[RMDB]
RNA sequence: GGGAACGACUCGAGUAGAGUCGAAAACUGAGCGUCGUGGCGAAAAGCGCUGGCGCUCAAUGCCAUGACGUCAACAAGCCGAACAUGGCGGACUGCGGUAUCGCGGUUUUCCGCGGUGUCGAAACCGAAAGGUCAAGUUGUUCGCAACUUGACCUUUAAAAGAAACAACAACAACAAC
Reactivity to 2A3 in 0.01 (KOAc 150mM, MgCl2 10mM, bicine 150mM(pH8.5), 24C), signal-to-noise 1, nucleotides 027 to 126: c010u010g010a040g000c010g000u000c030g010u040g020g030c030g010a040a040a020a030g000c000g030c170u110g180g040c040g000c010u000c000a000a010u040g050c000c010a000u030g010a010c020g040u060c000a000a060c050a110a020g150c010c010g010a100a080c130a100u180g050g050c030g020g000a020c090u100g050c040g030g000u060a020u120c000g020c030g040g050u120u020u170u060c000c010g010c000g030g000u010g000u010c020g000a150a030a030c040c020g100
Reactivity to DMS in 0.01 (KOAc 150mM, MgCl2 10mM, bicine 150mM(pH8.5), 24C), signal-to-noise 2, nucleotides 027 to 126: c100u010g000a100g000c020g010u000c000g050u000g010g000c000g000a120a100a110a130g010c000g040c060u010g030g020c000g020c010u020c050a040a070u020g000c000c010a030u000g000a060c050g010u030c060a070a080c120a090a160g000c070c020g000a060a140c130a050u010g000g010c030g000g000a030c070u010g030c000g010g030u000a030u000c000g020c000g000g000u010u000u010u000c020c020g010c000g000g030u010g010u000c040g000a050a200a080c040c040g000